[RMDB]
RNA sequence: GGGAACGACUCGAGUAGAGUCGAAAAUCAAUAUUCUAGUUAACGCGACUUCAAGAGGCUGCCAUGAAAAUAAUGAGCGAUUUUAUGAACAACGAAGUCUGGGGUCAGUUUGCCGAGACGCAAUCACUGUCAUGGACACAUUCGUGUGUCCAUGACAAAAAGAAACAACAACAACAAC
Reactivity to 2A3 in 0.01 (KOAc 150mM, MgCl2 10mM, bicine 150mM(pH8.5), 24C), signal-to-noise 1, nucleotides 027 to 126: u230c140a160a040u100a130u270u090c000u000a030g120u000u140a080a070c080g050c050g060a000c030u110u080c010a000a050g030a190g050g000c010u000g050c000c000a100u050g060a010a000a280a000u160a070a160u160g010a000g070c000g030a000u120u000u030u080a140u230g040a080a000c000a000a000c170g120a160a000g020u000c120u000g000g000g000g000u000c040a010g060u020u020u000g000c000c000g050a070g090a020c170g100c150a000a120u010c030a030c080
Reactivity to DMS in 0.01 (KOAc 150mM, MgCl2 10mM, bicine 150mM(pH8.5), 24C), signal-to-noise 1, nucleotides 027 to 126: u020c140a010a120u140a100u010u000c030u030a050g020u040u070a070a080c220g000c120g050a050c030u030u000c080a170a050g000a040g000g000c100u000g010c000c070a000u000g000a030a030a070a170u000a000a070u040g030a080g000c150g050a220u000u000u000u000a070u000g000a000a060c060a010a080c020g040a070a010g000u000c100u000g020g000g000g000u000c070a020g000u060u000u000g080c090c000g000a070g010a120c100g000c060a000a100u000c120a020c170
An RNA of 177 nucleotides, treated with 2A3 and DMS and read out base by base. DMS adducts were read by reverse transcription with MarathonRT. 2A3 adducts were read by reverse transcription with SuperScript II with manganese. High 2A3 reactivity points to a flexible backbone, as in loops and unpaired stretches. The 2A3 profile rests on 464 reads.